[RMDB]
RNA sequence: GGGAACGACUCGAGUAGAGUCGAAAAACAUGACAUGGUCAUGCUAGUGAUCUGUCUAGCGUACCAUGCGCUAGAGUACACGAUAUGCUAGCUAGUCGAGGAUCAUAGCAUAUCUAGAGCACUGCGAAGCACGGGGUAAUUUCGAUUACCCCGUGCUAAAAGAAACAACAACAACAAC
Reactivity to DMS in 0.01 (KOAc 150mM, MgCl2 10mM, bicine 150mM(pH8.5), 24C), signal-to-noise 4, nucleotides 027 to 126: a080c090a060u000g000a140c010a050u010g000g020u000c080a030u010g000c040u000a010g030u000g010a060u000c100u010g020u000c000u000a000g010c000g020u000a100c160c160a070u000g010c000g020c010u010a030g000a070g000u010a080c210a100c190g010a020u010a020u000g000c000u000a020g010c090u000a070g010u000c130g000a110g020g010a080u000c080a140u000a010g010c010a000u000a000u000c000u000a110g000a070g020c030a020c010u000g010c130g020a170
Reactivity to 2A3 in 0.01 (KOAc 150mM, MgCl2 10mM, bicine 150mM(pH8.5), 24C), signal-to-noise 3, nucleotides 027 to 126: a000c030a070u160g050a000c050a090u150g090g000u050c010a030u050g000c010u050a020g000u020g050a200u060c050u040g130u000c000u030a000g000c010g000u030a150c040c080a110u160g000c000g000c010u050a010g000a020g050u120a060c070a010c050g010a030u000a000u030g020c000u040a020g090c030u010a060g140u120c100g080a120g070g050a060u110c010a100u020a020g010c000a000u000a000u040c010u020a010g040a000g030c010a010c040u060g020c090g070a040
Chemical mapping of a 177-nucleotide RNA with DMS and 2A3. Source: RMDB library OK2TRN, as collected in RNAgym. The DMS profile rests on 3,534 reads. DMS adducts were read by reverse transcription with MarathonRT. For 2A3, 2,432 sequencing reads were counted.